[RMDB]
RNA sequence: GGGAACGACUCGAGUAGAGUCGAAAAUCUGGCCGCGCUGGAACAAUCCGGCUGCGUUUCCAGAAAGGCUGGCUGGUUGCCGCGUCAUCUGCGCCUCGAAGACGAUCAGGGCAAUCUUAUCGGCGCAGCCCCUGCAGCUAUUCGUAGCUGCAGGGGCAAAAGAAACAACAACAACAAC
Reactivity to 2A3 in 0.01 (KOAc 150mM, MgCl2 10mM, bicine 150mM(pH8.5), 24C), signal-to-noise 1, nucleotides 027 to 126: u040c000u000g020g000c040c000g000c000g010c020u010g000g000a070a160c100a050a280u000c010c000g060g000c100u150g010c030g010u000u220u130c020c000a010g040a050a020a010g120g040c060u040g000g000c010u060g040g060u040u020g040c010c020g030c020g000u040c020a080u010c060u080g000c010g040c060c000u000c120g060a040a000g090a010c010g000a070u170c100a120g120g060g000c050a010a020u060c000u010u130a200u110c020g020g000c060g040c050a020
Reactivity to DMS in 0.01 (KOAc 150mM, MgCl2 10mM, bicine 150mM(pH8.5), 24C), signal-to-noise 2, nucleotides 027 to 126: u000c020u000g000g010c300c000g000c060g050c020u010g000g010a030a150c230a160a080u000c040c020g020g020c000u010g060c040g010u000u010u000c020c000a000g030a020a100a080g010g010c000u020g010g030c110u000g000g030u000u000g040c000c020g020c130g030u000c030a080u000c020u000g020c010g040c030c050u020c160g000a130a070g010a040c060g000a060u000c130a080g010g020g000c020a050a030u010c060u000u000a110u000c060g000g030c010g020c060a160

About this RNA:
Source: RMDB library OK2TST, as collected in RNAgym. An RNA of 177 nucleotides, treated with 2A3 and DMS and read out base by base. For 2A3, 912 sequencing reads were counted. For DMS, 1,106 sequencing reads were counted. For 2A3 the reverse transcriptase was SuperScript II with manganese.